[RMDB]
Notes:
The record gives the reactivity of an RNA of 177 nucleotides to 2A3 and DMS. The RNA was probed in 150 mM KOAc, 10 mM MgCl2 and 150 mM bicine (pH 8.5) at 24 C. Values cover nucleotides 27 to 126. The data come from the RNA Mapping Database (RMDB), library M2PK50. In probing experiments dimethyl sulfate is read out at A N1 and C N3, which are open when not base-paired. The 2A3 profile rests on 1,046 reads. DMS adducts were read by reverse transcription with MarathonRT.
RNA sequence: GGGAACGACUCGAGUAGAGUCGAAAAUAUCCUCGUUUCGACGAGGAUAACAGAAAACUCAUGCCAAAUAAAACGCUGACAGGCAUGAGAAUAGUCAGCGAAACAUACGGGUCUUCGGACCCGUAAAUUACUUUGUCACAUUCGUGUGACAAAGUAAAAAAGAAACAACAACAACAAC
Reactivity to 2A3 in 0.01 (KOAc 150mM, MgCl2 10mM, bicine 150mM(pH8.5), 24C), signal-to-noise 1, nucleotides 027 to 126: u040a000u010c000c010u030c000g000u000u000u140c240g070a010c000g000a010g000g000a000u000a000a010c010a000g190a010a060a010a010c000u000c000a000u000g020c000c000a130a300a000u190a050a060a020a020c070g020c020u000g000a010c010a040g000g000c010a000u020g010a030g000a000a000u040a010g000u010c000a000g010c000g040a110a050a000c060a010u060a020c000g000g000g030u040c040u080u080c280g080g000a010c000c020c000g000u000a010a000a000
Reactivity to DMS in 0.01 (KOAc 150mM, MgCl2 10mM, bicine 150mM(pH8.5), 24C), signal-to-noise 2, nucleotides 027 to 126: u000a000u010c000c000u000c010g010u000u000u010c200g040a030c000g000a010g040g000a010u000a010a090c170a130g000a070a080a060a060c000u000c000a030u010g000c020c010a100a140a060u010a050a020a070a150c190g010c000u020g000a010c020a070g000g000c000a010u000g010a010g000a060a040u010a120g000u000c010a010g020c000g010a140a140a070c130a130u000a000c010g000g010g010u000c000u000u000c270g080g000a000c000c010c000g000u000a000a010a070